[RMDB]
RNA sequence: GGGAACGACUCGAGUAGAGUCGAAAAUCAAAGAGCGUCGCACUCACGCAGACUAAGUCUGCUGCAUGCAGAGCCUAAACCGCAGGCUCUGUGUGCGAGAUAUCGUUCAAAAUGCAUGCAGAAAAAAGCGAUCUUUAAUGUUCGCAUUAAAGAUCGCAAAAGAAACAACAACAACAAC
Reactivity to DMS in 0.01 (KOAc 150mM, MgCl2 10mM, bicine 150mM(pH8.5), 24C), signal-to-noise 2, nucleotides 027 to 126: u000c150a090a110a070g010a050g000c010g000u010c050g020c060a070c050u010c030a090c130g040c000a020g010a040c000u020a020a150g010u000c000u000g010c030u000g000c000a010u000g060c020a020g010a000g010c000c000u000a060a030a220c140c190g000c160a010g010g000c000u010c010u000g040u000g030u000g000c000g000a040g030a100u020a080u000c060g000u020u000c010a050a050a050a040u010g010c030a030u000g000c030a090g010a000a060a050a100a080a100
Reactivity to 2A3 in 0.01 (KOAc 150mM, MgCl2 10mM, bicine 150mM(pH8.5), 24C), signal-to-noise 2, nucleotides 027 to 126: u160c050a110a050a030g040a000g000c020g050u030c030g020c020a030c010u070c000a020c060g020c050a000g010a010c030u190a180a060g060u000c000u000g000c000u010g010c000a000u010g000c000a000g000a000g020c010c000u090a200a110a140c060c070g090c130a000g000g000c000u040c000u010g020u000g000u000g000c000g000a020g000a010u140a020u070c010g020u000u080c060a030a030a070a040u070g000c020a020u050g020c040a030g180a080a080a010a000a050a000